[RMDB]
RNA sequence: GGGAACGACUCGAGUAGAGUCGAAAAGUGAAGGCUUUGUGUGUGCACAGACAGGUAUAAAUCAAUGUAGGAGUAAGAGGGGAAAGCCUGAAAUGAGGUAAUGGUUCUUGAUGACCAAGGGACAGGCCAUGUCCAGUGCUCAAGAUCAGGGUCAUGGCCUGCGUAUAGUAUUCGUACUAUACGCAGGAAAAGAAACAACAACAACAAC
Reactivity to 2A3 in 0.01 (KOAc 150mM, MgCl2 10mM, bicine 150mM(pH8.5), 24C), signal-to-noise 9, nucleotides 027 to 156: g070u070g040a090a010g030g010c020u050u110u020g040u030g010u010g010u040g020c030a010c020a050g060a030c030a030g030g060u100a100u070a160a100a060u130c100a040a060u120g070u090a030g000g020a020g020u070a090a030g040a050g030g010g000g020a040a040a010g020c010c000u010g020a050a050a060u120g010a030g000g030u090a060a060u060g030g000u050u030c030u060u110g050a100u140g030a040c020c010a020a050g040g000g010a010c010a020g040g040c040c030a030u030g010u000c010c010a020g040u060g040c020u020c070a030a040g020a120u070c040a020g040g010g030u040c020a040u060g050g050
Reactivity to DMS in 0.01 (KOAc 150mM, MgCl2 10mM, bicine 150mM(pH8.5), 24C), signal-to-noise 6, nucleotides 027 to 156: g010u010g010a090a080g010g010c020u010u000u000g040u000g020u000g030u010g030c020a110c050a110g020a080c040a070g020g000u000a110u010a060a080a110u020c080a070a100u000g020u000a060g030g000a100g010u000a050a090g010a110g010g010g020g010a070a060a090g020c020c010u010g000a040a050a120u000g010a080g010g010u000a080a100u000g020g020u000u000c060u010u000g000a120u010g010a060c020c030a070a100g010g010g020a080c040a060g010g010c050c040a060u010g000u000c020c000a110g010u000g000c050u000c030a040a070g010a120u010c030a070g010g000g010u000c030a060u010g020g000